[RMDB]
RNA sequence: GGGAACGACUCGAGUAGAGUCGAAAAUCUUCCUCCUCGCUGAGGCGCUUCCCUCCUGCGGAGAGCUGCUUCUUCUUGUUCUCGAGGGCCUUCCUUCUUCGGUGAUCCUGCCUCUCCUUGUCGGUGACUAAAAGUUAGUCUUCGGACUAACUUUUAGAAAAGAAACAACAACAACAAC
Reactivity to DMS in 0.01 (KOAc 150mM, MgCl2 10mM, bicine 150mM(pH8.5), 24C), signal-to-noise 4, nucleotides 027 to 126: u010c130u000u000c020c010u000c030c020u000c060g040c100u010g010a080g010g010c110g010c090u000u000c040c010c010u010c080c080u010g010c130g010g010a090g010a050g010c050u010g010c060u000u010c020u000u000c030u000u010g010u010u000c020u000c020g000a130g010g010g010c050c040u010u000c020c010u000u000c040u000u000c050g010g010u010g010a090u000c030c030u000g010c030c020u000c020u000c010c020u000u000g020u000c050g010g010u000g000a230
Reactivity to 2A3 in 0.01 (KOAc 150mM, MgCl2 10mM, bicine 150mM(pH8.5), 24C), signal-to-noise 2, nucleotides 027 to 126: u030c010u050u030c010c000u000c010c000u030c030g040c090u090g040a030g030g020c030g010c040u060u010c020c010c000u040c060c040u070g050c070g040g010a050g010a000g060c070u080g010c000u050u030c000u040u010c010u050u100g050u100u060c020u010c030g030a050g000g050g020c010c000u050u040c000c000u030u040c010u050u030c020g030g040u080g030a070u030c000c000u020g030c000c010u020c010u000c000c000u000u000g060u020c050g030g020u050g010a020
Description:
Structure probing data (DMS and 2A3) for a 177-nucleotide construct. For DMS, 7,231 sequencing reads were counted. The RNA was probed in 150 mM KOAc, 10 mM MgCl2 and 150 mM bicine (pH 8.5) at 24 C.